An RNA of 207 nucleotides, treated with 2A3 and read out base by base.
The reactions ran in a buffer of 150 mM KOAc, 10 mM MgCl2 and 150 mM bicine (pH 8.5), at 24 C.
For 2A3 the reverse transcriptase was SuperScript II with manganese.

RNA sequence: GGGAACGACUCGAGUAGAGUCGAAAAGAACGAGAUCUCUCGUACUCGUUCACGAUCACGAGAACUCGUUCACGUGAUCGAGAUCGAACGAGUGAGUACACGUUCGAACGUGUGUACGUACGUACUCUCUCACGAGUGAGAGUUCACGUGAACGAUCUGUAUUGUGGCUUUUCGAAGCCACAAUACAAAAAGAAACAACAACAACAAC
Reactivity to 2A3 in 0.01 (KOAc 150mM, MgCl2 10mM, bicine 150mM(pH8.5), 24C), signal-to-noise 1, nucleotides 027 to 156: g010a020a000c000g000a000g050a180u040c050u010c030u030c070g000u080a040c010u010c010g040u040u040c050a050c090g050a120u170c070a040c170g040a070g040a170a080c050u010c120g070u010u000c000a010c000g000u000g000a000u060c030g040a030g010a120u050c010g030a060a100c040g000a010g000u040g010a000g010u030a000c020a020c000g020u120u150c080g080a160a040c090g070u150g080u080g030u170a020c020g040u010a030c120g010u010a010c000u010c000u000c000u000c000a060c090g060a070g070u110g090a060g000a030g090u030u030c000a000c000g000u000g040a000a010c000g000a030u000c040